[RMDB]
RNA sequence: GGGAACGACUCGAGUAGAGUCGAAAAGGGGUCACGCUUGUCAGGGAGAGAUGGAGCUUGGAUUUAUGGCUGAAGCCUCCACGGCCAUUGUCAGCUCCUACCUCUCCCUUGGAUUUAGCGUGACGGAGGCACCCAAACGUAAUGUUCGCAUUACGAACCUAUCAUCAAGAUUCGUCUUGAUGAUAGGAAAAGAAACAACAACAACAAC
Reactivity to DMS in 0.01 (KOAc 150mM, MgCl2 10mM, bicine 150mM(pH8.5), 24C), signal-to-noise 2, nucleotides 027 to 156: g000g020g000g030u010c010a000c020g030c010u000u000g020u000c040a060g000g000g020a030g020a020g000a070u000g010g030a030g030c000u050u000g040g010a080u000u010u000a020u010g030g040c000u000g010a050a100g030c080c040u010c020c030a300c040g010g000c010c000a010u000u000g040u000c020a050g000c010u010c000c010u010a050c050c000u000c010u010c010c010c000u000u000g020g000a040u000u000u000a060g030c000g010u010g010a040c040g030g010a080g050g010c050a140c010c010c000a070a090a170c020g000u010a000a020u000g010u000u000c300g020c020a020u000u010a010c010g000a140a240
Reactivity to 2A3 in 0.01 (KOAc 150mM, MgCl2 10mM, bicine 150mM(pH8.5), 24C), signal-to-noise 3, nucleotides 027 to 156: g070g000g030g010u000c000a000c000g010c010u000u060g020u030c040a010g050g060g000a020g000a010g000a000u030g000g000a010g000c080u170u160g150g010a090u250u300u110a010u090g010g000c000u030g040a140a060g050c060c040u080c050c020a030c030g000g050c000c000a010u000u020g010u030c020a000g000c000u000c000c010u010a030c000c000u000c010u000c000c000c010u010u050g010g000a000u120u080u210a000g000c000g000u000g000a010c000g000g010a010g010g010c050a070c020c020c000a060a080a010c020g010u010a000a000u020g030u050u080c270g000c110a000u010u010a020c030g020a030a070